RNA sequence: GGGAACGACUCGAGUAGAGUCGAAAAAUACAGUACGAAAGUACAAAGAAGCAAUCUAACCGAGCAGUGAAAUGAUGGCUUCAGUCCAAAAUGGGCAAACACUGCAGACGGAGCCAAAGGCAAAUAACCCUAUCAAAAGUUUCGACUUUUGAUAGGGAAAAGAAACAACAACAACAAC
Reactivity to DMS in 0.01 (KOAc 150mM, MgCl2 10mM, bicine 150mM(pH8.5), 24C), signal-to-noise 2, nucleotides 027 to 126: a090u000a110c100a150g020u000a000c000g000a150a080a100g000u000a000c030a100a120a090g000a050a020g000c040a060a010u020c040u010a130a100c020c030g000a070g000c030a050g010u000g000a100a100a090u010g000a050u000g000g020c000u000u010c030a060g000u000c030c040a030a050a100a050u020g000g000g000c050a100a060a130c060a020c030u000g000c030a090g000a120c070g010g000a090g010c030c020a050a040a120g010g020c050a080a030a050u000a050a100
Reactivity to 2A3 in 0.01 (KOAc 150mM, MgCl2 10mM, bicine 150mM(pH8.5), 24C), signal-to-noise 2, nucleotides 027 to 126: a000u130a030c030a000g020u000a000c020g020a090a050a030g040u020a000c020a020a130a020g040a020a000g020c020a030a070u060c020u080a060a120c020c020g000a010g000c030a010g020u050g050a060a120a140u110g050a030u050g050g000c000u040u030c050a010g020u020c000c000a100a170a060a230u180g000g000g010c010a040a040a010c010a000c010u020g000c000a000g040a020c020g040g000a020g040c000c010a080a040a060g080g000c000a080a020a000u100a050a050
The record gives the reactivity of an RNA of 177 nucleotides to DMS and 2A3. The RNA was probed in 150 mM KOAc, 10 mM MgCl2 and 150 mM bicine (pH 8.5) at 24 C. The DMS profile rests on 1,875 reads. Reactivities are given for positions 27 through 126. For 2A3 the reverse transcriptase was SuperScript II with manganese.